[RMDB]
RNA sequence: GGGAACGACUCGAGUAGAGUCGAAAAACGCGGAGUACGCUCCGCGACAACACUUCUUUCGACCCGCUAACCGAGACCUAUGGGUCGUUAAAUUACGUCUCUAUCUUACUCACAUAACAUAGCACAAAAAACGUGGUUCGGUUCGCCGAACCACGAAUCGUUCCUAACUGUUCGCAGUUAGGAACGAAAAAGAAACAACAACAACAAC
Reactivity to 2A3 in 0.01 (KOAc 150mM, MgCl2 10mM, bicine 150mM(pH8.5), 24C), signal-to-noise 2, nucleotides 027 to 156: a030c000g000c000g010g000a020g000u050a050c190g030c090u000c020c000g080c000g040a030c020a050a060c050a040c050u180u160c040u090u270u170c020g000a010c010c000c000g040c200u170a010a000c030c000g040a010g020a040c000c000u010a060u300g000g000g000u000c000g030u000u050a000a000a030u190u070a010c010g020u000c020u000c020u000a220u070c080u100u130a090c040u060c110a100c000a110u180a120a020c040a070u080a060g080c100a020c110a130a030a060a100a110a040c050g000u020g000g050u000u000c020g000g080u010u090c220g040c090c000g010a010a010c000c040a000c000g000a020a000